An RNA of 177 nucleotides, treated with 2A3 and read out base by base. It was measured as part of the RMDB library RFM100.
[RMDB]
RNA sequence: GGGAACGACUCGAGUAGAGUCGAAAAAACGAUGCCCGGUUCUACCGCACGUCCCCACGUGAGGAUGCGCCUCUGCCGUCUACCCCGCAAUAUGCGACUAUGGUGGAAGCGUGAAUCACGUGGAUAGGUGCGCAGUGCUAUUCGUAGCACUGCGCACAAAAGAAACAACAACAACAAC
Reactivity to 2A3 in 0.01 (KOAc 150mM, MgCl2 10mM, bicine 150mM(pH8.5), 24C), signal-to-noise 2, nucleotides 027 to 126: a010a010c040g010a010u000g010c040c010c000g000g000u050u000c030u090a090c010c000g000c040a020c000g090u080c050c000c000c000a000c010g000u000g090a030g070g030a070u200g000c000g000c010c000u010c000u000g000c000c000g010u020c080u040a090c000c000c000c070g000c030a080a180u250a180u300g010c040g080a030c020u070a060u220g000g010u000g000g000a000a000g000c000g010u010g000a000a010u000c000a000c000g000u000g000g000a000u050a010g090